[RMDB]
RNA sequence: GGGAACGACUCGAGUAGAGUCGAAAAUUAAUGAAGCAAAUCUCCAAACGCCAACGAUGAGCGUUUCGCAAUAGCCGCUUAAGGCUUUUGCCGAGGCUGCUUGAGCCUUGUUACCAAAGAAAAGCCGAAAACCCAAAUGUCUUCGGACAUUUGGGAACCAUCGCCAAUAGUUCGCUAUUGGCGAUGGAAAAGAAACAACAACAACAAC
Reactivity to 2A3 in 0.01 (KOAc 150mM, MgCl2 10mM, bicine 150mM(pH8.5), 24C), signal-to-noise 1, nucleotides 027 to 156: u170u080a070a050u090g100a050a030g060c030a020a070a160u050c090u030c070c040a030a010a020c000g000c010c000a120a090c150g120a110u100g080a020g080c010g010u000u050u090c050g000c010a000a000u000a010g010c010c010g140c220u300u270a120a070g000g000c000u000u000u000u000g040c010c010g020a000g000g000c030u050g000c030u030u030g020a000g000c000c000u000u000g030u100u130a040c000c040a010a000a000g020a020a040a000a000g030c000c000g080a100a060a020a070c000c000c000a000a000a000u000g000u010c020u000u040c180g030g000a010c000a000u010u000u000g010g010g010a020a000